[RMDB]
RNA sequence: GGGAACGACUCGAGUAGAGUCGAAAAGAUAUGGACCAGAUACGUCCUCCGUGUAGGUAGCUCCAUGGUCGGAAACGACCAUGAAGAGCUAUAAUCUACACGGAGGACGUAUUAGUGGUCCUAAGUCGAUGAGAAAAGUGUUCGCACUUUUCUCAUCAAAAGAAACAACAACAACAAC
Reactivity to DMS in 0.01 (KOAc 150mM, MgCl2 10mM, bicine 150mM(pH8.5), 24C), signal-to-noise 3, nucleotides 027 to 126: g000a150u010a300u010g020g000a010c000c000a080g000a010u000a000c010g000u000c000c000u000c000c000g010u010g000u000a010g010g010u000a010g010c000u000c000c000a000u000g000g020u000c000g010g020a110a140a290c000g000a010c000c000a000u000g000a170a130g010a010g030c010u000a020u000a300a100u020c010u000a010c020a010c000g000g000a000g000g000a000c000g010u000a000u000u000a060g030u010g010g020u000c000c000u010a000a080g010u020c140

Overview:
This 177-nucleotide RNA was probed chemically with DMS. Source: RMDB library TTRINS, as collected in RNAgym.